[RMDB]
RNA sequence: GGGAACGACUCGAGUAGAGUCGAAAAGACUGUCCGCUGCGGCGGGUGCAUUUCUGCAAGCCACCGGUCUGCCCGCCGAUACGGCCGGCACCGCGAUGGACCGCGCGACCGUGCUAUCGACCAACUGUAAUUUAGAAUUCUUCGGAAUUCUAAAUUAAAAAGAAACAACAACAACAAC
Reactivity to 2A3 in 0.01 (KOAc 150mM, MgCl2 10mM, bicine 150mM(pH8.5), 24C), signal-to-noise 4, nucleotides 027 to 126: g020a030c040u030g010u020c010c030g040c110u120g010c070g080g030c020g040g030g040u040g000c020a060u040u190u200c080u100g000c020a030a040g070c000c020a040c030c020g010g020u070c060u050g000c010c000c010g000c020c010g050a110u100a190c100g010g010c000c010g010g000c010a010c000c010g020c050g040a060u050g050g030a060c020c020g000c000g000c010g010a020c010c010g020u040g030c010u020a040u100c040g060a040c020c010a050a050c050u110g050
Reactivity to DMS in 0.01 (KOAc 150mM, MgCl2 10mM, bicine 150mM(pH8.5), 24C), signal-to-noise 6, nucleotides 027 to 126: g010a110c060u000g020u000c030c030g020c070u010g030c100g020g010c070g020g010g020u000g010c040a070u010u000u010c140u000g020c060a130a130g010c040c040a070c090c020g010g000u000c100u000g010c010c010c150g020c020c010g010a100u010a060c130g020g010c010c130g000g020c040a050c060c030g000c100g010a090u010g000g010a120c080c040g010c020g010c050g010a110c030c030g010u010g000c020u000a060u000c050g000a130c040c050a060a090c140u000g000
The record gives the reactivity of an RNA of 177 nucleotides to 2A3 and DMS.
The data come from the RNA Mapping Database (RMDB), library OK2TST.
DMS (dimethyl sulfate) methylates the pairing face of unpaired adenines and cytosines.
For DMS the reverse transcriptase was MarathonRT.
Conditions: 150 mM KOAc, 10 mM MgCl2 and 150 mM bicine (pH 8.5), 24 C.
For 2A3, 4,972 sequencing reads were counted.